[RMDB]
RNA sequence: GGGAACGACUCGAGUAGAGUCGAAAAUAACAUUUGAUAGCGAGGGAACUCCGUCCGGGGGUGAACCGCGAAACAGUACCGGACUCGCCAUGUAGCAUCCUGUCUUUCGGAGACUGCCUGGUUAACUAAAAGAGAGACUAAACAUGUAGCGCCGAGGCUUAUCUGUCAACUUCGGUUGACAGAUAAGAAAAGAAACAACAACAACAAC
Reactivity to 2A3 in 0.01 (KOAc 150mM, MgCl2 10mM, bicine 150mM(pH8.5), 24C), signal-to-noise 3, nucleotides 027 to 156: u170a030a010c050a080u110u110u160g060a080u130a070g020c030g030a200g040g010g000a020a010c010u000c050c040g030u010c020c020g030g010g000g000g010u020g010a020a020c020c000g010c010g030a060a010a000c090a030g040u040a050c000c030g030g000a030c030u010c060g000c000c010a030u010g010u030a010g030c030a070u010c010c020u040g020u030c020u020u050u040c010g010g000a020g040a040c000u000g000c000c010u020g000g000u030u060a070a060c080u110a020a030a050a020g010a000g010a000g020a000c010u080a060a150a000c010a080u100g030u120a050g030c020g000c080c040g040a010g040g040
Reactivity to DMS in 0.01 (KOAc 150mM, MgCl2 10mM, bicine 150mM(pH8.5), 24C), signal-to-noise 1, nucleotides 027 to 156: u010a120a110c050a270u010u000u000g010a120u000a100g060c040g000a130g010g000g010a190a060c040u040c000c040g010u000c060c000g030g060g010g030g060u020g010a220a150c030c030g000c080g000a100a070a090c080a160g000u010a000c040c020g030g030a050c060u010c000g020c010c030a050u000g000u010a040g050c060a080u000c040c000u020g010u000c040u000u000u000c020g010g030a180g040a280c010u000g010c000c000u000g000g000u000u000a060a130c080u010a060a080a100a120g000a070g000a090g010a090c020u010a090a060a090c070a000u000g000u000a070g000c040g040c040c010g000a120g000g000